RNA sequence: GGGAACGACUCGAGUAGAGUCGAAAAGUGGAUAGUUUCGACUAUCCACACAACUGAUGAUCUUACAGUGGAGGAUGAAGAAGAAGGCCAUCGGAUCCUCAAAUAGCACAGAGUUCGCUCUGUGCAACAACUUGUGCAGGUUCGCCUGCACAAGUUGAAAAGAAACAACAACAACAAC
Reactivity to 2A3 in 0.01 (KOAc 150mM, MgCl2 10mM, bicine 150mM(pH8.5), 24C), signal-to-noise 2, nucleotides 027 to 126: g000u000g010g000a000u000a000g020u010u080u070c160g040a010c010u000a010u030c010c000a000c000a010c000a010a030c030u070g010a030u050g000a010u060c020u050u120a100c060a090g050u080g090g140a090g070g050a120u110g050a070a160g000a050a040g030a020a040g010g010c030c000a000u000c010g010g020a020u040c000c020u080c030a070a070a060u130a010g000c010a010c000a000g030a010g020u040u080c170g100c060u000c000u000g000u000g000c010a000a000
Reactivity to DMS in 0.01 (KOAc 150mM, MgCl2 10mM, bicine 150mM(pH8.5), 24C), signal-to-noise 2, nucleotides 027 to 126: g000u000g000g000a000u020a000g010u000u000u000c230g000a080c010u000a000u000c000c010a070c000a030c170a100a060c010u020g010a030u000g000a030u000c040u000u000a130c100a080g030u020g000g000a050g020g040a140u000g020a060a110g010a100a100g010a020a020g000g030c040c010a030u010c070g000g000a090u000c000c000u000c220a040a060a140u000a090g030c000a000c010a020g000a010g020u000u050c130g010c000u020c000u000g000u000g000c000a040a050

Chemical mapping of a 177-nucleotide RNA with 2A3 and DMS. DMS adducts were read by reverse transcription with MarathonRT. For DMS, 1,218 sequencing reads were counted.